An RNA of 177 nucleotides, treated with DMS and 2A3 and read out base by base.
RNA sequence: GGGAACGACUCGAGUAGAGUCGAAAAACCCGAAAUGAAAAGCUCUCCUCCUGCGAAGCCCCCUCGGGGCGCUGUGCAGCGAGGCCCCUUAGGCGGCGGCCACGCUGUGGUCCCCGAGGUCCCGGAGGUAAAGUUCCUCAUUCGUGAGGAACUUUACAAAAGAAACAACAACAACAAC
Reactivity to DMS in 0.01 (KOAc 150mM, MgCl2 10mM, bicine 150mM(pH8.5), 24C), signal-to-noise 2, nucleotides 027 to 126: a030c000c000c010g000a080a070a080u050g000a140a080a100a130g010c050u030c020u000c030c010u000c000c010u010g000c080g000a120a100g030c110c010c050c000c010u000c020g010g000g000g040c110g040c160u020g010u080g010c030a000g010c020g030a090g010g000c010c000c010c010u010u050a060g000g020c170g000g030c230g020g030c000c000a060c010g030c000u010g000u000g000g000u050c000c000c000c000g000a040g000g020u000c010c030c070g020g000a050g000
Reactivity to 2A3 in 0.01 (KOAc 150mM, MgCl2 10mM, bicine 150mM(pH8.5), 24C), signal-to-noise 2, nucleotides 027 to 126: a010c010c000c010g030a160a090a070u190g030a070a070a020a010g020c010u010c010u010c030c010u000c000c020u040g030c020g060a060a030g020c010c000c000c010c000u000c010g000g000g050g010c050g000c040u110g060u120g010c000a000g010c000g000a030g010g000c000c000c000c000u090u060a110g140g050c020g050g010c160g040g000c030c000a000c000g000c000u000g050u050g030g030u080c010c000c000c000g000a000g000g000u000c000c000c000g080g050a050g020
Reactivities are given for positions 27 through 126. For DMS, 2,403 sequencing reads were counted. 2A3 adducts were read by reverse transcription with SuperScript II with manganese. For DMS the reverse transcriptase was MarathonRT. Source: RMDB library RFM100, as collected in RNAgym.